[RMDB]
RNA sequence: GGGAACGACUCGAGUAGAGUCGAAAAACAAGCUGCACGUGCGUGCGAGCAGUUUUCGAAAUCGCACGUUUCACGUAAAGACGCAACUCUACUCGAGAAAGCGAGUCACGCAGAGAGCGUCAAGGAACGACAGUGAUGUGUUCGCACAUCACUGUCGAAAAGAAACAACAACAACAAC
Reactivity to DMS in 0.01 (KOAc 150mM, MgCl2 10mM, bicine 150mM(pH8.5), 24C), signal-to-noise 1, nucleotides 027 to 126: a060c260a090a170g000c040u000g010c250a010c000g020u000g000c040g030u000g000c010g000a010g020c230a090g000u040u000u000u000c140g010a070a040a120u000c000g000c020a040c020g010u000u020u000c000a020c010g050u000a060a210a020g000a300c020g010c040a080a000c000u000c000u000a010c000u000c000g010a040g000a050a050a220g000c000g000a190g010u000c070a010c030g040c030a010g000a040g010a090g010c040g010u010c070a010a090g000g010a020a100
Reactivity to 2A3 in 0.01 (KOAc 150mM, MgCl2 10mM, bicine 150mM(pH8.5), 24C), signal-to-noise 2, nucleotides 027 to 126: a010c090a080a060g100c060u020g000c040a010c020g030u020g010c000g000u000g030c030g000a010g040c050a060g000u090u080u150u180c100g100a010a030a200u000c020g010c010a010c010g010u080u170u090c020a020c000g010u050a010a060a010g050a040c060g020c030a000a020c000u000c000u020a000c010u010c000g010a000g000a010a000a010g010c020g030a000g060u040c020a030c060g000c010a000g100a020g020a020g220c000g020u040c030a030a050g070g000a150a050